[RMDB]
RNA sequence: GGGAACGACUCGAGUAGAGUCGAAAAGUAUCCCUAGAUGAUAAAACACCGCACAUGGCUCGUAAGAGCGGUUAAAUUAGCAAGUUAUGCAAAUUACGCGAGGUAACGCAUGGCCUAGGCUCGUUAGAAAAGGGAGAAUCCUUCGGGAUUCUCCCAACCGUUAACAAUUGUUCGCAAUUGUUAACGGAAAAGAAACAACAACAACAAC
Reactivity to DMS in 0.01 (KOAc 150mM, MgCl2 10mM, bicine 150mM(pH8.5), 24C), signal-to-noise 2, nucleotides 027 to 156: g030u000a090u000c030c010c010u020a090g010a200u040g010a140u020a090a070a120a100c040a160c020c000g030c090a210c070a080u000g020g030c040u000c030g000u000a080a180g000a100g030c010g020g050u010u000a030a080a190u020u010a100g040c080a040a110g020u000u000a020u020g010c040a060a120a080u010u000a010c050g010c080g010a180g010g050u010a020a110c050g000c010a060u000g000g000c030c030u000a110g000g000c010u000c060g010u010u010a170g010a060a100a090a180g000g030g030a010g040a020a010u000c030c010u000u000c300g010g020g020a060u000u000c000u000c000c020c000a010a000
Reactivity to 2A3 in 0.01 (KOAc 150mM, MgCl2 10mM, bicine 150mM(pH8.5), 24C), signal-to-noise 2, nucleotides 027 to 156: g060u040a100u090c000c010c010u010a040g080a180u090g050a060u170a100a130a020a030c080a000c010c010g030c010a060c010a100u090g140g000c060u050c090g060u100a130a000g030a010g040c040g000g010u030u040a000a060a060u030u030a030g060c040a050a030g050u070u090a010u100g020c010a010a100a210u110u060a060c050g030c090g040a030g020g180u050a030a010c060g000c020a020u020g000g030c010c010u020a020g000g000c000u020c060g040u020u010a020g110a040a150a010a030g000g010g010a000g000a000a000u000c000c040u010u010c100g040g000g000a000u010u010c000u000c000c000c000a000a000